[RMDB]
RNA sequence: GGGAACGACUCGAGUAGAGUCGAAAACUCCCGGGAGCGGGGGACCACCAGGUUGCCUAAGGAGGGGUGAACCGGCCCAGGUCGGAAACGGAGCAGGUCAAAACUCCCGUGCUGAUCAGUAGUGGGAUCGCGCCUGUGAAUAGCCACUGCACUCCAGGAUAUCUUAGUUCUUCGGAACUAAGAUAUCAAAAGAAACAACAACAACAAC
Reactivity to DMS in 0.01 (KOAc 150mM, MgCl2 10mM, bicine 150mM(pH8.5), 24C), signal-to-noise 1, nucleotides 027 to 156: c070u000c000c100c020g050g030g020a060g070c070g030g000g050g010g000a040c030c020a150c030c060a100g020g020u010u020g000c010c010u010a090a070g060g020a050g000g000g020g040u000g020a080a060c050c000g010g000c000c020c060a080g030g000u000c010g020g010a040a110a090c070g020g020a220g020c040a070g010g010u000c080a020a060a160a030c080u010c030c000c000g020u000g010c020u000g010a100u000c030a150g010u000a060g020u000g010g030g020a080u000c090g040c050g000c040c020u000g040u010g000a080a070u000a150g010c040c000a080c020u000g000c010a100c040u000c010c010a180g010
Reactivity to 2A3 in 0.01 (KOAc 150mM, MgCl2 10mM, bicine 150mM(pH8.5), 24C), signal-to-noise 2, nucleotides 027 to 156: c020u010c030c000c010g010g040g000a100g040c060g000g010g010g000g030a030c000c010a000c010c030a020g020g060u060u090g030c010c020u080a110a090g030g030a020g010g030g020g000u050g060a040a030c010c000g010g030c020c010c010a040g060g010u040c010g030g040a110a030a060c050g010g010a080g010c050a040g040g010u050c020a020a040a040a130c030u010c000c000c010g010u020g010c030u090g000a110u050c050a020g030u070a010g050u050g020g000g000a010u010c050g020c000g020c030c020u060g020u020g040a090a090u100a070g000c000c000a020c020u020g010c020a030c020u000c010c010a030g000